[RMDB]
RNA sequence: GGGAACGACUCGAGUAGAGUCGAAAAAGUACACGUGAAGCACCAGGCACAUUGCCAGGCACACAGGAAGCACUUGCUAGUCAGUAGCCUCUGCAGCUAGCACUCGGCUACUAGUCAGUAGCCUCUCGGAUAGCACUGUGGGGGGAUGUGUCAUCCACCCGGCUGCAAAUUUCGAUUUGCAGCCGGGAAAAGAAACAACAACAACAAC
Reactivity to 2A3 in 0.01 (KOAc 150mM, MgCl2 10mM, bicine 150mM(pH8.5), 24C), signal-to-noise 1, nucleotides 027 to 156: a000g110u140a070c080a020c110g070u120g050a150a020g090c100a090c110c090a060g030g000c060a050c030a070u010u180g090c020c010a050g000g070c040a040c000a000c030a100g070g000a190a010g000c000a010c070u060u050g000c010u020a020g040u090c060a040g020u080a110g130c050c000u030c050u110g000c010a060g000c020u050a020g000c000a030c020u150c030g000g000c010u050a000c000u000a070g300u180c110a040g000u000a000g010c000c000u010c010u000c010g080g030a120u050a110g020c010a020c030u010g000u050g000g060g000g000g010g000a010u000g000u000g040u050c030a040u070c010c000a020